[RMDB]
RNA sequence: GGGAACGACUCGAGUAGAGUCGAAAAAGUGAUUUCGAUCACUAGUCUCCUAAGUCCAGCGAAGAACGUGUUGCGGCCGAUAAGCCUGUCGGAAACGACAGGCUUUUGACGGCUACAACACGGGAGCUGGAUAUGGAUUUACCGUUCUUCGGAACGGGUUCAGUAAACCAUUCGUGGUUUACUGAACAAAAGAAACAACAACAACAAC
Reactivity to DMS in 0.01 (KOAc 150mM, MgCl2 10mM, bicine 150mM(pH8.5), 24C), signal-to-noise 1, nucleotides 027 to 156: a060g000u000g020a030u000u000u000c260g040a050u010c000a030c010u000a140g010u000c050u000c010c030u000a060a220g040u000c000c010a010g050c000g010a140a200g030a070a140c000g030u000g010u000u000g000c010g000g020c000c010g030a110u000a060a030g040c010c000u010g010u000c000g030g010a210a160a300c010g040a020c000a020g030g000c010u000u000u000u000g020a180c100g050g040c000u000a020c000a000a000c030a010c000g000g000g010a190g030c000u010g010g010a020u000a030u010g010g000a120u000u000u000a110c000c000g000u000u000c000u000u010c280g050g010a010a000c010g000g020
Reactivity to 2A3 in 0.01 (KOAc 150mM, MgCl2 10mM, bicine 150mM(pH8.5), 24C), signal-to-noise 2, nucleotides 027 to 156: a000g020u010g000a010u110u130u240c220g090a030u010c010a000c000u010a050g100u020c040u000c070c000u090a180a000g010u030c000c010a000g020c050g170a300a030g040a070a020c000g000u000g010u010u000g010c030g000g000c010c000g040a050u010a020a000g050c010c000u010g010u020c000g020g070a090a040a040c010g000a000c000a000g000g010c070u010u000u010u020g020a010c000g000g000c000u010a000c000a000a010c000a000c000g020g000g000a010g000c000u000g000g000a000u000a000u010g010g000a030u090u090u180a080c020c010g010u000u000c010u040u100c190g150g000a000a000c000g010g010

Record summary
An RNA of 207 nucleotides, treated with DMS and 2A3 and read out base by base. For 2A3, 2,416 sequencing reads were counted. For 2A3 the reverse transcriptase was SuperScript II with manganese.